[RMDB]
Conditions: 150 mM KOAc, 10 mM MgCl2 and 150 mM bicine (pH 8.5), 24 C. This 207-nucleotide RNA was probed chemically with DMS and 2A3. Values cover nucleotides 27 to 156.
RNA sequence: GGGAACGACUCGAGUAGAGUCGAAAAUGAUUACCUUUUGGAUUGCAUGGGUGUCAUCCGUGAGUACUCACAAGAGUCUACGUCCGAACCAAAUGUCCAAACGAAGAGUGUUCUUGGUAUAAAAGUGGCUUCUCGCAAGGGGGUUCAACGAAAUGACCCAAUCUACAGUGUUCGCACUGUAGAUUGGAAAAGAAACAACAACAACAAC
Reactivity to DMS in 0.01 (KOAc 150mM, MgCl2 10mM, bicine 150mM(pH8.5), 24C), signal-to-noise 1, nucleotides 027 to 156: u010g010a070u010u000a240c000c030u000u000u000u000g010g050a170u010u000g050c020a120u010g030g030g080u010g010u000c000a030u000c070c040g060u040g020a250g010u010a070c020u000c030a140c070a020a300g020a090g010u000c000u010a140c010g060u010c020c000g060a090a080c040c010a050a120a050u000g000u030c000c040a040a150a110c010g000a070a080g000a080g010u000g030u000u000c060u000u000g010g080u000a110u000a110a040a110a020g040u000g000g000c000u000u000c010u000c040g000c040a060a200g000g040g020g000g030u000u000c020a040a200c150g020a030a040a110u010g000a160c110
Reactivity to 2A3 in 0.01 (KOAc 150mM, MgCl2 10mM, bicine 150mM(pH8.5), 24C), signal-to-noise 3, nucleotides 027 to 156: u050g000a010u080u180a140c020c000u120u090u060u160g180g010a230u120u170g110c060a050u040g050g000g010u040g040u060c040a020u010c010c010g040u030g100a030g040u110a020c000u010c020a070c010a180a000g000a030g040u030c010u010a020c010g090u010c060c020g020a020a010c010c010a020a080a130u090g040u040c030c000a110a030a020c040g020a070a070g050a010g070u050g030u100u000c030u090u050g080g030u130a120u090a160a100a020a010g070u080g010g030c000u060u040c010u070c060g100c060a080a100g020g010g000g010g020u020u100c010a050a010c040g090a140a040a040u140g070a070c020